[RMDB]
An RNA of 177 nucleotides, treated with DMS and 2A3 and read out base by base.
2A3 adducts were read by reverse transcription with SuperScript II with manganese.
For 2A3, 1,161 sequencing reads were counted.
The data come from the RNA Mapping Database (RMDB), library OK2TRN.
Reactivities are rounded to 0.1 and cut off at 0 and 3.
For DMS the reverse transcriptase was MarathonRT.
RNA sequence: GGGAACGACUCGAGUAGAGUCGAAAAGUUUGAACAGGGCAUCACCCAAGGAGAUAAAGAACUUGGUCUCACCGCGAUCGCCUUGCCGACCCGCCCGACCGCGCAGUUGGUUGUCAAUCCGGCGCGAAUACUCACACGGAUUCGUCCGUGUGAGUAUAAAAGAAACAACAACAACAAC
Reactivity to DMS in 0.01 (KOAc 150mM, MgCl2 10mM, bicine 150mM(pH8.5), 24C), signal-to-noise 3, nucleotides 027 to 126: g000u010u010u010g040a110a180c070a080g010g010g030c040a080u010c040a110c070c020c060a030a050g000g000a100g010a160u010a040a060a170g010a070a170c090u000u000g000g030u000c050u000c090a130c170c100g020c050g010a040u000c120g000c020c020u000u000g010c050c050g020a050c010c020c040g010c030c010c010g000a130c170c020g010c010g020c010a100g000u010u010g010g010u000u010g020u000c120a050a060u000c030c030g000g030c000g000c010g000a100
Reactivity to 2A3 in 0.01 (KOAc 150mM, MgCl2 10mM, bicine 150mM(pH8.5), 24C), signal-to-noise 1, nucleotides 027 to 126: g000u050u140u190g070a090a010c020a010g060g010g080c000a020u000c040a030c070c010c040a000a010g120g040a080g010a130u190a170a180a050g050a070a060c040u040u060g030g000u040c030u020c070a060c040c070g040c050g020a000u000c080g000c010c030u000u000g010c000c020g030a020c000c000c000g010c000c020c010g000a110c050c010g020c000g000c020a060g020u130u150g060g010u100u120g150u180c030a010a050u040c030c030g020g000c020g030c000g000a000